Structure probing data (DMS and 2A3) for a 177-nucleotide construct. 2A3 adducts were read by reverse transcription with SuperScript II with manganese. It was measured as part of the RMDB libraries RFM100 and RFMREP. For DMS the reverse transcriptase was MarathonRT.
[RMDB]
RNA sequence: GGGAACGACUCGAGUAGAGUCGAAAAAAUUGGCUAAGUGCGAUUUAAAGAGGUUAAUGACCGAAGACAGUGUGGAGGUUAGCUUAGAAGCAGCUAUCCUUUAAAGAGUGCGUAACAGCUCACUCACCUAGCGAGACAAAUUCGUUUGUCUCGCUAGAAAAGAAACAACAACAACAAC
Reactivity to DMS in 0.01 (KOAc 150mM, MgCl2 10mM, bicine 150mM(pH8.5), 24C), signal-to-noise 2, nucleotides 027 to 126: a030a050u030u000g020g000c030u020a050a140g040u020g000c070g000a050u020u010u020a040a080a060g030a210g000g010u010u000a070a050u040g030a110c010c000g000a050a110g000a110c080a040g010u000g000u000g000g000a040g000g000u000u000a010g010c000u000u000a100g010a100a100g020c300a010g000c040u010a000u000c000c010u000u000u030a030a050a150g000a060g030u000g000c030g010u000a090a090c200a180g000c040u000c050a000c020u000c010a070c280
Reactivity to 2A3 in 0.01 (KOAc 150mM, MgCl2 10mM, bicine 150mM(pH8.5), 24C), signal-to-noise 2, nucleotides 027 to 126: a010a030u130u080g100g030c140u130a220a080g040u170g120c010g010a020u050u060u200a230a170a000g070a080g000g090u000u040a060a010u220g100a030c000c000g090a020a000g040a000c020a030g070u080g000u040g150g000a000g000g000u010u020a000g000c000u110u030a020g040a300a000g050c040a000g000c010u010a000u010c000c000u000u040u000a050a020a000g040a000g010u050g000c040g000u010a050a000c020a030g000c000u010c000a020c000u040c000a030c000